[RMDB]
RNA sequence: GGGAACGACUCGAGUAGAGUCGAAAAGAAAAACGCCAAAAAGCAUUUAAAGUAUGCGGUCUAGGCGGGCUUGUUACCAUGCAAAGUUAUCGACAAUAACUUAGACCAAGUACGAAAGUACAAAAAAGAUUCUACAUAGGUUCGCCUAUGUAGAAUCAAAAGAAACAACAACAACAAC
Reactivity to DMS in 0.01 (KOAc 150mM, MgCl2 10mM, bicine 150mM(pH8.5), 24C), signal-to-noise 1, nucleotides 027 to 126: g010a070a060a060a100a080c030g010c000c000a020a010a040a080a080g060c010a000u000u020u010a100a100a140g000u000a000u000g020c040g000g000u000c010u000a120g000g010c020g000g000g010c040u010u000g010u000u020a140c050c020a080u000g000c040a050a030a020g000u000u000a010u000c080g020a140c210a090a140u010a010a020c010u000u000a040g000a020c000c040a060a160g020u000a000c000g000a130a100a070g010u000a010c000a000a020a060a100a110a070
Reactivity to 2A3 in 0.01 (KOAc 150mM, MgCl2 10mM, bicine 150mM(pH8.5), 24C), signal-to-noise 1, nucleotides 027 to 126: g110a010a120a010a000a010c000g000c000c000a010a010a010a000a030g000c000a020u020u080u250a100a130a040g080u090a040u030g010c020g000g000u000c010u010a020g020g020c000g010g000g000c000u030u050g050u100u070a110c040c020a020u070g010c020a040a000a080g000u030u030a050u100c110g110a090c060a110a050u040a010a010c000u000u010a000g000a000c000c000a120a040g000u000a000c010g010a040a000a000g000u020a010c000a000a090a000a000a030a060
The record gives the reactivity of an RNA of 177 nucleotides to DMS and 2A3. The reactions ran in a buffer of 150 mM KOAc, 10 mM MgCl2 and 150 mM bicine (pH 8.5), at 24 C. The DMS profile rests on 1,490 reads. Values are in units of 0.01, from 0 to 300, in steps of 10. For 2A3 the reverse transcriptase was SuperScript II with manganese. Source: RMDB library M2PK90, as collected in RNAgym.